Structure probing data (2A3 and DMS) for a 177-nucleotide construct.
Source: RMDB library OK2TST, as collected in RNAgym.
The reactions ran in a buffer of 150 mM KOAc, 10 mM MgCl2 and 150 mM bicine (pH 8.5), at 24 C.
RNA sequence: GGGAACGACUCGAGUAGAGUCGAAAAGGAAAAAGAUUUACAACACGCAAAAUGUUGUAAAAGGAAUGAGCGGGUUUGUCUUAAACCCUCAACGACUGCAAGGGAAAACAGGACACGCACCACAAGGGAUCUUAUCUUAUUUCGAUAAGAUAAGAUCAAAAGAAACAACAACAACAAC
Reactivity to 2A3 in 0.01 (KOAc 150mM, MgCl2 10mM, bicine 150mM(pH8.5), 24C), signal-to-noise 5, nucleotides 027 to 126: g050g010a050a090a010a000a010g040a010u010u010u010a000c000a010a000c010a000c020g080c070a030a060a080a200u030g000u010u000g000u020a010a000a000a020g040g020a130a080u110g010a040g060c050g000g040g020u030u050u050g020u020c000u010u050a100a100a080c000c030c000u010c010a050a090c070g200a060c080u110g020c090a040a020g040g000g000a010a070a030a050c050a030g020g000a010c010a000c030g000c010a060c030c000a030c040a080a040g140g050
Reactivity to DMS in 0.01 (KOAc 150mM, MgCl2 10mM, bicine 150mM(pH8.5), 24C), signal-to-noise 8, nucleotides 027 to 126: g010g000a050a070a130a150a110g010a130u000u000u000a010c000a010a020c010a010c040g010c300a060a070a120a260u000g000u010u000g010u000a000a000a030a110g020g020a100a060u010g000a140g020c110g010g010g010u000u000u000g010u000c070u010u000a040a070a110c010c000c000u010c040a080a090c150g000a060c110u010g010c130a060a040g000g010g000a050a040a070a070c140a040g000g000a040c050a040c070g010c030a090c020c040a060c150a060a100g000g000
The DMS profile rests on 9,894 reads.